[RMDB]
RNA sequence: GGGAACGACUCGAGUAGAGUCGAAAACAGUUCAGGCAAAGGACAAGCAGACUUCCAGGGCUAUUGCAUCCUUUUCACAAGCCGCUGCCCUGAGUGCCCCGGAGCAUCGGCUCUAUGCCCGGUACGGCUAAAUCAAACACUUCGGUGUUUGAUUUAGAAAAGAAACAACAACAACAAC
Reactivity to 2A3 in 0.01 (KOAc 150mM, MgCl2 10mM, bicine 150mM(pH8.5), 24C), signal-to-noise 9, nucleotides 027 to 126: c030a030g030u090u100c030a020g040g020c040a060a060a030g040g010a040c030a080a040g040c020a030g020a130c040u120u040c050c030a020g020g020g000c030u080a080u080u130g010c010a060u080c020c000u050u040u100u140c150a110c030a130a020g010c010c010g000c040u030g000c010c000c000u050g040a050g040u090g030c010c000c000c010g010g000a040g010c020a040u050c030g050g000c010u020c020u050a040u100g010c010c010c000g020g030u070a050c040g040g010
Reactivity to DMS in 0.01 (KOAc 150mM, MgCl2 10mM, bicine 150mM(pH8.5), 24C), signal-to-noise 8, nucleotides 027 to 126: c100a090g010u020u010c060a090g010g020c070a050a080a070g010g000a050c100a080a070g010c060a050g010a090c090u010u010c050c050a070g010g010g010c030u010a080u020u010g000c050a110u010c040c010u000u010u010u020c130a090c180a110a120g000c040c040g000c070u000g000c010c020c010u010g000a090g010u010g000c020c020c020c020g000g000a080g000c030a060u010c060g000g020c010u000c050u020a070u020g010c020c000c000g010g000u010a060c140g020g010